The record gives the reactivity of an RNA of 207 nucleotides to 2A3. Source: RMDB library OK3TST, as collected in RNAgym. Conditions: 150 mM KOAc, 10 mM MgCl2 and 150 mM bicine (pH 8.5), 24 C. Values cover nucleotides 27 to 156. The 2A3 profile rests on 947 reads.
RNA sequence: GGGAACGACUCGAGUAGAGUCGAAAAUUUGAGAUGAGGUCUCGCGCUUGUCACCCAGGGGUCUCCUGCUGCCACUGUAUGAUCGAGUGUAGUGGUGUGAUCAUGGCUCGCUGCAACCUCGACCUUCCUGGGCUCAGGUGAUCCUCCCACCUCAGCAGUCCCCGCAUGGAUUCGUCCAUGCGGGGACAAAAGAAACAACAACAACAAC
Reactivity to 2A3 in 0.01 (KOAc 150mM, MgCl2 10mM, bicine 150mM(pH8.5), 24C), signal-to-noise 2, nucleotides 027 to 156: u150u090u150g090a100g020a030u020g030a010g110g010u040c020u040c100g110c030g020c070u140u180g040u090c000a010c020c000c000a000g000g010g030g010u000c010u000c010c030u040g030c010u050g000c010c020a220c190u050g020u070a040u030g050a230u070c010g040a040g080u060g020u070a000g000u000g170g090u040g030u030g020a150u230c080a130u240g140g000c050u060c080g050c020u000g000c000a090a070c050c000u000c000g010a010c000c030u060u080c020c060u020g020g020g040c000u000c000a000g000g000u000g000a000u020c000c000u030c000c030c000a020c020c000u080c000a060g000c040a010